[RMDB]
RNA sequence: GGGAACGACUCGAGUAGAGUCGAAAAGAUAUGGACUUCUACCCACCACCGGGUAGGCGUUGAAAUCGGAAACGAUGGAGCCUACAGGUGAGGAAGUCCUAAGUCAAAAGAGCCCUUCGGGGCUCAAGUACAUCUCCUAGUUCGCUAGGAGAUGUACAAAAGAAACAACAACAACAAC
Reactivity to DMS in 0.01 (KOAc 150mM, MgCl2 10mM, bicine 150mM(pH8.5), 24C), signal-to-noise 2, nucleotides 027 to 126: g000a130u010a140u010g020g000a030c000u010u000c000u000a240c000c010c010a300c100c000a000c040c010g020g000g030u000a000g010g010c000g000u000u000g000a050a090a020u000c000g010g000a120a070a230c000g000a020u000g000g010a120g030c000c000u000a010c010a200g010g010u000g000a080g000g000a000a000g010u000c010c000u010a030a060g000u000c170a080a040a180a080g010a000g040c000c000c020u000u010c190g040g010g020g030c000u000c010a010a080
Reactivity to 2A3 in 0.01 (KOAc 150mM, MgCl2 10mM, bicine 150mM(pH8.5), 24C), signal-to-noise 1, nucleotides 027 to 126: g060a040u190a150u190g010g000a020c010u000u040c000u070a240c010c030c010a000c000c000a000c030c020g300g240g000u030a000g000g000c000g080u230u040g000a000a030a030u000c020g010g000a080a030a030c000g000a000u010g000g040a000g000c000c000u010a000c020a000g030g010u020g000a020g000g000a010a000g000u040c000c000u010a040a020g120u130c060a000a000a050a130g000a010g040c040c000c030u000u050c190g030g010g020g040c030u010c010a010a000
Chemical mapping of a 177-nucleotide RNA with DMS and 2A3. Source: RMDB library TTRDEL, as collected in RNAgym. The reactions ran in a buffer of 150 mM KOAc, 10 mM MgCl2 and 150 mM bicine (pH 8.5), at 24 C. Values are in units of 0.01, from 0 to 300, in steps of 10.